[RMDB]
RNA sequence: GGGAACGACUCGAGUAGAGUCGAAAAUUGACGGUGGGGUAGUCUUUACUCCAAUGAGCAUCGAACCACAGCGAAGUGGAUUCAUCGCAAAGAUGCAUUAGUCACGGAGCCACGUAGACAUGGCUAACGUAUCAUUUAUAUUCGUAUAAAUGAUACGAAAAGAAACAACAACAACAAC
Reactivity to DMS in 0.01 (KOAc 150mM, MgCl2 10mM, bicine 150mM(pH8.5), 24C), signal-to-noise 9, nucleotides 027 to 126: u010u010g010a040c050g020g030u000g010g010g010g020u000a020g010u010c160u010u010u000a040c020u000c010c020a050a090u000g010a130g000c010a010u000c020g010a080a160c030c030a050c070a120g000c140g010a090a100g010u000g010g010a120u010u000c080a080u000c090g010c120a080a090a130g010a010u000g010c020a140u010u010a060g000u000c020a040c160g000g000a090g000c010c010a020c050g010u000a100g010a110c110a090u000g000g010c010u010a060a170
Reactivity to 2A3 in 0.01 (KOAc 150mM, MgCl2 10mM, bicine 150mM(pH8.5), 24C), signal-to-noise 9, nucleotides 027 to 126: u060u060g010a010c040g040g040u040g010g000g000g000u020a010g050u050c000u120u240u020a020c010u000c010c000a010a060u150g040a030g010c010a010u010c040g020a040a050c020c010a020c030a030g160c130g140a250a030g020u030g020g060a110u080u070c040a070u100c060g030c130a090a080a020g010a010u010g000c010a030u050u140a030g010u030c010a000c060g040g020a010g010c010c000a020c030g040u060a050g030a130c040a080u030g010g000c010u010a070a020